An RNA of 177 nucleotides, treated with DMS and 2A3 and read out base by base. In probing experiments dimethyl sulfate is read out at A N1 and C N3, which are open when not base-paired. The data come from the RNA Mapping Database (RMDB), library OK2TST. For DMS the reverse transcriptase was MarathonRT. The RNA was probed in 150 mM KOAc, 10 mM MgCl2 and 150 mM bicine (pH 8.5) at 24 C.

[RMDB]
RNA sequence: GGGAACGACUCGAGUAGAGUCGAAAAACGGCUUGGCCAGCCAGUCGGCGACGCUGGAUGUGUUCCCGACGUGUCCGGUCGUGCGGUUGCUGUGGAAGGUGAUCGACCUGGCUGCCGCAGUUGAGGACUAGGUAUUAGCGUUCGCGCUAAUACCUAGAAAAGAAACAACAACAACAAC
Reactivity to DMS in 0.01 (KOAc 150mM, MgCl2 10mM, bicine 150mM(pH8.5), 24C), signal-to-noise 5, nucleotides 027 to 126: a130c140g010g000c020u000u010g020g010c080c070a190g000c030c020a140g000u000c040g010g010c070g000a130c160g000c010u000g000g000a060u010g010u010g000u010u000c080c010c010g010a070c070g010u000g010u000c010c020g010g010u000c040g020u000g020c020g010g010u000u000g010c010u000g020u000g000g000a050a300g000g000u010g010a100u010c020g010a300c010c000u000g000g010c000u000g000c000c010g010c010a040g000u000u000g010a140g000g010a100
Reactivity to 2A3 in 0.01 (KOAc 150mM, MgCl2 10mM, bicine 150mM(pH8.5), 24C), signal-to-noise 3, nucleotides 027 to 126: a010c030g010g000c010u090u230g100g000c030c010a020g030c020c020a020g060u020c030g000g060c050g010a020c030g000c010u080g160g080a110u190g070u010g000u070u010c010c000c000g000a030c010g040u070g010u000c010c020g050g050u050c030g060u060g010c000g000g000u020u040g010c010u060g030u150g130g050a030a020g030g090u190g100a220u300c010g000a010c010c000u000g000g000c010u010g000c010c000g000c000a030g020u110u180g170a050g000g050a020